[RMDB]
This 177-nucleotide RNA was probed chemically with 2A3. The reactions ran in a buffer of 150 mM KOAc, 10 mM MgCl2 and 150 mM bicine (pH 8.5), at 24 C. The 2A3 profile rests on 393 reads. It was measured as part of the RMDB library OK1LIB.

RNA sequence: GGGAACGACUCGAGUAGAGUCGAAAAGCUCGCUCUAUGAUAAACUGUACUAAACUAAAUAAAAGUUUUUGGGUUGAAGCUGUUUUGACAGCAACAUAUUUAAUGAACAGGUCCCCAAGUAGAGCUACGGAGGAUCCUAGUUCGCUAGGAUCCUCCGAAAAGAAACAACAACAACAAC
Reactivity to 2A3 in 0.01 (KOAc 150mM, MgCl2 10mM, bicine 150mM(pH8.5), 24C), signal-to-noise 2, nucleotides 027 to 126: g000c060u050c060g000c000u000c010u000a090u020g190a080u140a080a160a070c020u000g060u160a120c000u120a070a110a050c070u140a040a000a300u250a000a300a170a050g080u000u000u020u100u080g280g000g030u090u050g090a090a010g070c000u000g060u010u070u000u280g210a010c000a040g000c000a000a000c030a000u160a130u040u110u170a120a090u110g020a130a000c000a000g020g190u140c060c000c000c000a030a000g000u000a000g010a000g040c000u000a000